[RMDB]
RNA sequence: GGGAACGACUCGAGUAGAGUCGAAAAUUAGUGUUUCGACACUAAACAGGGGGGUCCGUUGAAAUUAUAACUUCGAGGAUCGUACUGAAGCCUCCACGGUACGGGAGAAGCUAUAAUGGAGGACGGAGGCACCCACAGUAACCGGUUCGCCGGUUAACUGUCGGAUUAUAUUCGUAUAAUCCGACAGAAAAGAAACAACAACAACAAC
Reactivity to DMS in 0.01 (KOAc 150mM, MgCl2 10mM, bicine 150mM(pH8.5), 24C), signal-to-noise 2, nucleotides 027 to 156: u000u000a000g040u000g000u000u000u010c220g010a240c000a040c010u000a010a060a130c080a220g000g010g030g030g030g020u000c010c010g000u010u000g010a280a160a040u010u010a000u000a010a010c030u000u000c000g020a130g010g000a040u000c010g000u000a010c000u000g000a110a120g020c010c030u000c010c020a300c040g000g000u000a000c030g010g030g000a060g000a040a000g020c020u000a030u000a010a010u000g020g000a090g030g000a070c060g000g020a070g040g050c040a210c010c010c010a080c080a080g000u000a020a030c000c000g000g000u010u000c270g050c050c000g030g000u010u000a020a110
Reactivity to 2A3 in 0.01 (KOAc 150mM, MgCl2 10mM, bicine 150mM(pH8.5), 24C), signal-to-noise 3, nucleotides 027 to 156: u050u010a020g000u020g030u050u120u120c180g080a010c000a010c010u030a030a100a070c120a090g020g010g000g010g030g000u000c010c010g060u090u020g010a000a000a000u010u000a000u000a030a020c010u010u000c000g020a190g010g000a000u000c000g000u000a000c000u010g050a140a040g010c000c000u000c000c000a000c000g010g010u000a000c000g000g000g000a000g000a000a000g000c010u010a000u000a010a000u010g010g010a010g000g000a000c000g000g000a000g000g000c000a040c000c010c010a070c020a020g050u020a020a010c000c000g000g040u050u080c280g040c040c000g030g000u000u040a040a040